Chemical mapping of a 207-nucleotide RNA with DMS and 2A3.
The data come from the RNA Mapping Database (RMDB), library ARCHII.
Conditions: 150 mM KOAc, 10 mM MgCl2 and 150 mM bicine (pH 8.5), 24 C.
Reactivities are given for positions 27 through 156.
2A3 adducts were read by reverse transcription with SuperScript II with manganese.

[RMDB]
RNA sequence: GGGAACGACUCGAGUAGAGUCGAAAAUAAGCAAGUGGUGUUGACGCUUGGGUCCUGCGCAAUGGGAAUCCAUGAACCAUGUCAGGUCCGGAAGGAAGCAGCAUUAAGUGGAACCUUCCAUGUGCCGCAGGGUUGCCUGGGCUGAGCUAACUGCUUACAUUUAAGUGACGUUCGCGUCACUUAAAUGAAAAGAAACAACAACAACAAC
Reactivity to DMS in 0.01 (KOAc 150mM, MgCl2 10mM, bicine 150mM(pH8.5), 24C), signal-to-noise 3, nucleotides 027 to 156: u000a020a060g070c000a000a050g010u000g020g020u000g030u000u010g020a160c300g000c000u000u000g000g030g000u000c010c000u010g010c070g010c040a080a080u000g010g050g020a050a300u000c010c000a050u010g000a100a290c150c170a000u010g010u000c040a300g010g020u010c010c000g050g010a150a180g000g030a060a060g010c040a290g030c030a060u000u010a090a300g060u010g000g010a030a110c070c120u000u000c000c010a040u000g070u000g060c070c030g000c030a060g000g020g000u000u000g020c010c030u010g020g010g030c030u010g000a070g040c030u000a040a020c020u000g000c020u010u000a050
Reactivity to 2A3 in 0.01 (KOAc 150mM, MgCl2 10mM, bicine 150mM(pH8.5), 24C), signal-to-noise 1, nucleotides 027 to 156: u040a000a000g000c000a010a000g010u000g010g000u040g050u300u090g030a000c000g000c010u010u010g000g000g030u300c000c000u000g000c010g000c010a010a010u010g000g000g010a010a090u000c000c000a020u040g010a020a050c150c040a050u020g050u080c000a000g010g010u000c000c010g100g020a100a090g020g000a020a000g010c000a000g000c000a000u040u020a110a030g010u000g010g000a030a060c020c030u000u010c020c000a030u170g080u060g210c170c070g000c010a010g010g010g010u030u180g010c000c000u000g010g000g000c000u010g000a000g000c000u010a000a000c000u000g010c000u000u000a000